[RMDB]
RNA sequence: GGGAACGACUCGAGUAGAGUCGAAAACCUUCUUCUCGUUUGCCUUUUUCUGCUUCUGCUGCAUGAUCUCCGAGUCCCUAGGGGUAGAGAUGAUGGGGCACUGGGAGGUACCAGAGGGCAAAAAGGACUAGGAACGUGGGUUUCGACCCACGUUCAAGGCUUACUUCUCUUUCGAGAGAAGUAAGCCAAAAGAAACAACAACAACAAC
Reactivity to 2A3 in 0.01 (KOAc 150mM, MgCl2 10mM, bicine 150mM(pH8.5), 24C), signal-to-noise 1, nucleotides 027 to 156: c000c040u030u100c060u070u030c050u020c070g120u040u130u160g030c010c000u010u050u030u100u100c180u160g010c040u180u150c010u160g160c040u040g060c050a100u260g060a010u060c000u000c000c010g060a030g070u070c000c000c020u060a040g000g010g060g100u160a070g000a020g040a120u270g040a110u130g010g000g000g020c090a020c040u020g060g000g000a000g010g000u000a020c010c010a000g000a000g020g010g030c000a000a000a000a000a020g050g000a020c120u160a090g150g000a000a000c000g000u000g000g000g040u010u050u070c210g050a070c010c010c000a000c000g000u000u000c000a000a000

Structure probing data (2A3) for a 207-nucleotide construct. Source: RMDB library RFM130, as collected in RNAgym. Reactivities are rounded to 0.1 and cut off at 0 and 3.